[RMDB]
This 177-nucleotide RNA was probed chemically with DMS and 2A3. The 2A3 profile rests on 1,636 reads. The reactions ran in a buffer of 150 mM KOAc, 10 mM MgCl2 and 150 mM bicine (pH 8.5), at 24 C.
RNA sequence: GGGAACGACUCGAGUAGAGUCGAAAACCUUGGUCCUUCGGGACCAAGGAAACCCGAAGACAUACAGACUCUGGGCGGCGAGACAAUCCACAAGAGUCGCUAAAAGCGUCUGGUUCGCCAGACGCAAGAGAUAUGAAGACUUCGGUCUUCAUAUCUCAAAAGAAACAACAACAACAAC
Reactivity to DMS in 0.01 (KOAc 150mM, MgCl2 10mM, bicine 150mM(pH8.5), 24C), signal-to-noise 1, nucleotides 027 to 126: c010c010u000u000g040g000u000c010c010u000u000c170g000g000g000a000c020c010a000a040g000g000a000a060a130c010c000c000g020a020a080g000a060c260a060u020a080c130a190g010a080c000u000c000u000g010g010g020c130g000g020c190g000a170g030a190c180a100a110u000c040c030a040c080a110a110g000a020g100u000c000g020c100u010a000a040a030a140g000c000g000u000c000u010g000g010u000u000c250g010c000c000a000g000a000c000g000c000a020a000
Reactivity to 2A3 in 0.01 (KOAc 150mM, MgCl2 10mM, bicine 150mM(pH8.5), 24C), signal-to-noise 2, nucleotides 027 to 126: c000c000u000u000g000g000u000c010c020u010u010c190g120g000g010a000c000c000a000a000g000g010a060a000a010c010c000c010g050a070a010g130a020c080a040u300a090c080a110g050a010c030u000c010u060g030g140g000c090g050g000c080g040a050g020a090c110a060a120u010c040c000a040c000a080a030g010a000g010u020c010g000c020u170a150a140a030a080g020c000g000u000c000u020g000g040u040u020c190g050c030c000a010g000a020c000g000c000a000a010